Notes: Source: RMDB library OK2TST, as collected in RNAgym. Structure probing data (DMS) for a 177-nucleotide construct. The RNA was probed in 150 mM KOAc, 10 mM MgCl2 and 150 mM bicine (pH 8.5) at 24 C. For DMS, 665 sequencing reads were counted. For DMS the reverse transcriptase was MarathonRT.

RNA sequence: GGGAACGACUCGAGUAGAGUCGAAAAUUUGAUUUUUCCUUCUGGCGCCGGAAGAAAGCAUCGCAUUUGCUCUUCUGCACCCACAGAGGAGUGCAAACAUAUGAUAUGAAACUUUGCGUUGCGCUCAUAUACUGCAGGCAUUCGUGCCUGCAGUAUAAAAAGAAACAACAACAACAAC
Reactivity to DMS in 0.01 (KOAc 150mM, MgCl2 10mM, bicine 150mM(pH8.5), 24C), signal-to-noise 1, nucleotides 027 to 126: u010u010u000g010a110u010u000u000u000u000c040c000u020u000c120u010g000g000c060g000c020c020g020g000a120a050g000a070a050a100g010c060a030u000c060g020c060a140u000u000u010g030c030u000c000u000u000c000u010g000c040a200c090c050c020a130c060a010g000a030g020g000a010g010u010g000c140a070a080a150c040a070u000a100u000g030a140u000a040u010g020a100a050a130c080u000u000u000g010c020g010u000u000g020c020g050c090u000c160a100